Notes: Chemical mapping of a 177-nucleotide RNA with DMS and 2A3.
RNA sequence: GGGAACGACUCGAGUAGAGUCGAAAAAUCUCUGAAAAGAGUCGGUGCAUUCAUUAAAGCUACGUAAUGCGACGAUCUUGUUUGCAGCUGAUACCGCAUCGCUCGGGGAGAACGUCGUUCUCCUCGAUUACGAUGUGCCCUUCGGGGCACAUCGUAAAAAAGAAACAACAACAACAAC
Reactivity to DMS in 0.01 (KOAc 150mM, MgCl2 10mM, bicine 150mM(pH8.5), 24C), signal-to-noise 1, nucleotides 027 to 126: a140u000c000u020c000u030g010a110a020a150a030g010a020g010u010c000g060g020u020g000c040a030u040u050c110a190u000u040a020a240a080g000c080u040a020c200g010u000a040a140u010g010c010g000a000c010g000a060u060c150u060u000g080u000u000u030g020c010a000g000c070u000g000a030u030a160c100c120g000c080a000u030c020g110c270u000c010g010g000g000g000a000g000a000a020c000g020u070c190g000u020u000c000u000c000c000u000c010g020a040
Reactivity to 2A3 in 0.01 (KOAc 150mM, MgCl2 10mM, bicine 150mM(pH8.5), 24C), signal-to-noise 1, nucleotides 027 to 126: a000u000c010u000c020u010g030a020a040a010a000g010a000g030u010c000g020g020u000g000c030a040u000u080c000a010u020u190a170a040a100g050c150u110a070c110g180u280a100a000u050g000c000g080a000c090g020a120u040c010u150u270g080u170u090u110g070c030a040g010c070u030g080a060u050a160c000c080g170c000a030u000c000g040c100u010c030g000g000g010g000a000g010a000a000c000g300u300c110g000u030u000c030u000c010c000u000c000g000a000
DMS adducts were read by reverse transcription with MarathonRT.
The reactions ran in a buffer of 150 mM KOAc, 10 mM MgCl2 and 150 mM bicine (pH 8.5), at 24 C.